[RMDB]
RNA sequence: GGGAACGACUCGAGUAGAGUCGAAAAAGUGUUGGUAGAUCCAAAUUUGAUCAUUAACCAACAAGCAAGUGUUAACUUUGCUUUUGCAUAAGUAGAUACUAAAGCUACAGCUGGUGAAUAGUCAUAGUUUGCUAGCUGUCAUAGUUUAUGACUCGAGCUACCAUAGGACGUUCGCGUCCUAUGGUAGAAAAGAAACAACAACAACAAC
Reactivity to 2A3 in 0.01 (KOAc 150mM, MgCl2 10mM, bicine 150mM(pH8.5), 24C), signal-to-noise 5, nucleotides 027 to 156: a000g050u040g010u010u010g000g020u010a030g000a020u010c110c110a110a220a300u260u130u170g000a010u000c000a010u010u060a040a050c000c000a000a000c010a000a010g000c000a050a020g010u020g020u130u120a070a030c020u030u010u030g020c000u090u100u220u300g010c010a050u060a200a030g030u040a060g030a070u040a040c010u090a160a030a030g010c020u010a000c000a000g010c000u000g000g000u030g030a010a000u010a040g030u010c010a010u020a040g010u020u000u020g000c000u010a000g010c010u010g000u020c000a050u080a080g040u140u170u010a030u020g010a010c010u020c060g030a030g050
Reactivity to DMS in 0.01 (KOAc 150mM, MgCl2 10mM, bicine 150mM(pH8.5), 24C), signal-to-noise 2, nucleotides 027 to 156: a140g010u000g020u010u010g000g020u000a160g020a130u010c040c100a040a070a260u010u000u020g020a040u000c010a060u000u000a110a100c020c010a040a030c030a070a150g020c070a160a040g020u010g040u010u000a110a040c020u000u000u000g020c010u000u000u000u030g020c020a040u010a050a060g040u000a220g030a100u020a090c050u000a070a060a120g010c030u000a040c010a060g020c020u010g000g010u020g000a010a020u000a060g020u000c250a100u010a130g020u000u010u010g020c020u000a020g020c030u020g000u010c050a040u000a120g000u000u000u000a040u030g030a050c050u000c040g010a170g020